[RMDB]
RNA sequence: GGGAACGACUCGAGUAGAGUCGAAAAAAUUAAAUAUCAUUAAGUCUAAAGCUGAAACAUUAAUGACUUCCUGUAAUUCAACUUAUGAAUAUGAAUACACGAAUAAGCUAGUUUUGUGUGGUUACUAUGAUUAUUCAGGUGAUAAGGAUGGCCUAGAAGUCCUAACCAAUUUCGAUUGGUUAGGACUAAAAGAAACAACAACAACAAC
Reactivity to DMS in 0.01 (KOAc 150mM, MgCl2 10mM, bicine 150mM(pH8.5), 24C), signal-to-noise 1, nucleotides 027 to 156: a080a100u030u000a040a060a150u010a120u010c010a030u010u010a010a080g000u000c020u030a100a140a080g040c040u000g010a170a050a100c040a030u000u000a010a020u000g000a040c050u010u000c030c010u000g000u000a070a090u000u000c050a020a040c010u000u000a050u000g000a130a070u010a060u030g000a180a070u000a110c050a060c050g000a140a050u000a030a050g010c050u000a100g000u000u000u020u000g050u000g010u000g030g030u010u010a030c050u000a050u010g010a080u000u000a050u020u000c020a070g010g030u000g010a110u000a050a110g010g000a120u000g040g020c080c000u000a030g010a270
Reactivity to 2A3 in 0.01 (KOAc 150mM, MgCl2 10mM, bicine 150mM(pH8.5), 24C), signal-to-noise 1, nucleotides 027 to 156: a010a010u160u110a120a030a030u290a140u150c000a010u020u020a010a000g000u040c000u090a150a020a020g000c080u080g030a150a090a050c060a160u050u090a080a000u010g000a030c000u040u030c000c010u000g010u030a000a160u020u080c050a040a050c050u120u120a040u270g120a090a030u090a090u060g010a000a000u050a040c050a020c050g100a100a020u070a050a040g040c020u000a030g040u060u020u040u110g110u000g000u000g000g000u100u000a000c020u080a020u190g020a100u090u010a020u040u110c020a020g010g100u010g060a020u030a050a000g050g000a020u000g000g020c000c020u000a000g020a030